[RMDB]
RNA sequence: GGGAACGACUCGAGUAGAGUCGAAAAGGGGUCAAGUUUGUCAGCAUCGAAUCGAGCUUGGAUUUAUAGGCUGAAGCCUCCACGGCCUAUUGUCAGCUCGAGGAGAUGCUUGGAUUUAACUUGACGGAGGCACCCAAAAUCCAUCUUCGGAUGGAAACUGAUAAACAAGGUUCGCCUUGUUUAUCAGAAAAGAAACAACAACAACAAC
Reactivity to 2A3 in 0.01 (KOAc 150mM, MgCl2 10mM, bicine 150mM(pH8.5), 24C), signal-to-noise 5, nucleotides 027 to 156: g080g010g010g000u000c000a000a010g010u030u050u040g040u050c020a020g010c010a010u010c010g000a020a020u000c000g000a000g000c030u150u180g180g000a070u200u300u090a020u050a000g010g010c000u010g110a170a050g080c030c050u050c060c030a030c010g010g000c000c000u000a000u000u020g020u020c010a000g000c000u010c000g000a000g000g000a020g000a000u000g000c000u000u020g000g000a000u000u110u270a020a010c000u000u000g000a000c000g000g020a010g010g020c040a060c030c010c000a050a050a010a030u000c000c000a000u000c000u060u060c220g130g010a000u010g000g000a030a030a010
Reactivity to DMS in 0.01 (KOAc 150mM, MgCl2 10mM, bicine 150mM(pH8.5), 24C), signal-to-noise 3, nucleotides 027 to 156: g010g010g020g000u000c010a020a010g020u000u000u000g000u000c020a080g000c010a040u000c000g020a300a300u000c000g010a010g010c000u000u000g040g010a020u000u000u010a050u000a020g010g010c010u000g000a050a100g020c060c010u000c010c050a300c010g000g000c000c000u000a020u000u000g010u000c020a070g010c010u010c010g000a020g010g000a300g010a020u000g020c000u010u000g030g010a060u010u000u010a000a030c010u000u000g000a050c010g000g060a060g040g020c040a170c000c030c020a090a070a080a120u000c000c010a020u000c000u000u000c250g060g010a020u000g010g010a010a020a090